The record gives the reactivity of an RNA of 177 nucleotides to DMS and 2A3. For 2A3 the reverse transcriptase was SuperScript II with manganese. Conditions: 150 mM KOAc, 10 mM MgCl2 and 150 mM bicine (pH 8.5), 24 C. The 2A3 profile rests on 44,682 reads. Values cover nucleotides 27 to 126.

[RMDB]
RNA sequence: GGGAACGACUCGAGUAGAGUCGAAAAGAUAUGGACUGUCGGUUGCCUUCUUACUAAUGUGAACUACGGUUUGUCUCGGAAACGAGACAUACCGCACAUUAGUAAGAAUAAGCGACAGUCCUAAGUCGAUGUAUACUACGUUCGCGUAGUAUACAUCAAAAGAAACAACAACAACAAC
Reactivity to DMS in 0.01 (KOAc 150mM, MgCl2 10mM, bicine 150mM(pH8.5), 24C), signal-to-noise 7, nucleotides 027 to 126: g000a100u000a300u000g010g010a000c000u000g020u000c000g010g010u000u000g010c300c300u000u000c000u000u000a000c000u000a010a000u000g010u000g010a110a070c180u020a300c020g000g000u000u000u000g010u000c000u000c010g000g000a130a100a190c010g010a020g010a010c000a010u000a000c000c000g020c000a000c000a010u000u000a010g000u000a000a000g000a010a010u010a100a040g000c000g000a010c000a000g010u000c000c000u000a010a090g010u000c080
Reactivity to 2A3 in 0.01 (KOAc 150mM, MgCl2 10mM, bicine 150mM(pH8.5), 24C), signal-to-noise 6, nucleotides 027 to 126: g050a050u150a080u230g000g010a000c010u010g020u020c040g170g300u190u040g070c020c040u040u000c000u000u000a000c000u010a000a020u010g010u010g060a210a110c160u220a060c300g010g010u030u030u010g000u010c000u010c000g050g010a140a110a070c010g000a000g000a000c000a000u010a000c000c000g000c010a000c000a000u000u000a000g000u000a000a000g000a000a000u030a000a000g080c010g000a000c000a000g000u000c000c000u000a030a000g050u060c100
Values are in units of 0.01, from 0 to 300, in steps of 10.